[RMDB]
RNA sequence: GGGAACGACUCGAGUAGAGUCGAAAAGAUAUGGAAAGCUUUGAUCUAUCCAGCCGAUGAAAUCGGAAACGAUGGAGGCUGAAUAGGGAGCUUUCCUAAGUCAAACACCGACCUUCGGGUCGGUGAACAAGUCAGUAAAGUUCGCUUUACUGACUUGAAAAGAAACAACAACAACAAC
Reactivity to 2A3 in 0.01 (KOAc 150mM, MgCl2 10mM, bicine 150mM(pH8.5), 24C), signal-to-noise 3, nucleotides 027 to 126: g010a010u090a040u160g000g010a020a000a010g000c010u290u200u130g090a100u120c010u000a000u010c020c000a000g000c030c000g200a300u060g010a020a010a020u010c010g000g040a130a050a010c010g010a010u020g030g040a010g000g000c000u010g010a000a020u000a000g000g010g000a000g000c000u020u000u010c000c000u000a020a000g020u000c030a000a120a050c000a000c000c010g000a000c010c010u060u130c300g080g030g000u000c020g010g000u000g000a000a010
Reactivity to DMS in 0.01 (KOAc 150mM, MgCl2 10mM, bicine 150mM(pH8.5), 24C), signal-to-noise 4, nucleotides 027 to 126: g000a030u010a300u000g000g000a010a010a010g000c000u000u000u000g000a060u010c010u000a010u000c010c000a010g010c010c000g000a130u010g000a080a120a020u000c000g010g000a140a080a160c000g020a020u000g000g010a080g020g020c000u000g000a010a010u000a010g010g000g000a000g010c000u000u000u000c000c000u000a020a070g000u000c020a110a170a300c010a010c000c000g010a020c000c000u000u010c190g020g020g020u000c000g010g000u000g000a040a130
Record summary: Chemical mapping of a 177-nucleotide RNA with 2A3 and DMS. The reactions ran in a buffer of 150 mM KOAc, 10 mM MgCl2 and 150 mM bicine (pH 8.5), at 24 C. The DMS profile rests on 5,882 reads.